[RMDB]
RNA sequence: GGGAACGACUCGAGUAGAGUCGAAAACUGUCACUUCUUUCCUCAUUCCAUUUGGAGGCUAGAAGAGGAGGAGGAGGUGUACUCCUGAAGGGCCACCCCUUCUUCCCUAGUCACCCACGGUCUUCAUGCCUCCUGUCUCCUGCUGGAGACCCUGGCCUACGAAAGGCCUAUUCGUAGGCCUUUCGUAAAAAGAAACAACAACAACAAC
Reactivity to 2A3 in 0.01 (KOAc 150mM, MgCl2 10mM, bicine 150mM(pH8.5), 24C), signal-to-noise 2, nucleotides 027 to 156: c040u040g070u100c030a010c040u050u010c020u050u150u070c030c030u040c020a160u140u060c100c000a110u040u020u170g040g000a050g000g000c010u020a020g010a140a020g030a170g060g000a000g000g020a030g000g040a160g000g000u020g010u040a100c040u090c020c040u160g070a170a260g080g000g000c130c020a030c030c030c000c000u000u000c000u010u010c020c000c000u050a060g040u030c050a050c020c030c000a020c040g040g010u020c020u020u030c020a020u130g000c010c000u020c050c000u020g010u050c030u030c020c010u140g200c080u120g020g000a020g040a000c020c000c000u050g040g020c040c010